[RMDB]
RNA sequence: GGGAACGACUCGAGUAGAGUCGAAAACGUACGUGGAGACACGUACGACGUGACUUCGGUCACGAAUAGAGGCAACUCCUGCGCCUCCCGCGCGAGGCGUCGGUGGUCGGCGAGCCCACGGACGCAAAAACUCGCGCGGAUAUAACUAGCAGGAGAACAUACCAUCGGGUUUCGACCCGAUGGUAUGAAAAGAAACAACAACAACAAC
Reactivity to 2A3 in 0.01 (KOAc 150mM, MgCl2 10mM, bicine 150mM(pH8.5), 24C), signal-to-noise 3, nucleotides 027 to 156: c010g000u000a000c000g010u000g010g020a050g010a030c000a000c010g000u000a000c000g000a010c000g000u000g000a000c010u030u060c280g100g000u000c000a000c010g000a050a100u190a090g010a010g010g000c030a120a300c080u010c000c000u000g000c010g000c000c010u060c190c000c000g000c000g000c010g000a010g050g000c010g000u010c070g100g000u000g010g000u010c050g030g180c230g050a020g010c000c010c000a010c030g120g000a010c000g000c020a050a070a120a090a110c010u000c000g000c000g000c000g000g000a000u000a000u000a000a020c080u060a010g000c000a000g000g010a000g000a000a000
Reactivity to DMS in 0.01 (KOAc 150mM, MgCl2 10mM, bicine 150mM(pH8.5), 24C), signal-to-noise 2, nucleotides 027 to 156: c010g010u000a040c000g060u000g010g040a300g020a300c000a030c000g040u010a000c010g010a090c030g030u000g020a040c000u000u020c290g010g000u000c000a000c000g000a180a020u010a160g000a120g000g000c060a070a210c000u030c000c030u010g010c000g020c030c000u000c030c000c000g010c040g010c000g000a030g010g020c020g040u000c010g050g120u000g040g030u000c030g000g020c080g030a300g000c300c000c000a010c000g000g000a040c020g020c090a070a000a030a190a300c010u000c010g050c000g040c000g010g000a000u000a010u010a070a040c090u000a160g030c040a010g010g010a050g000a100a240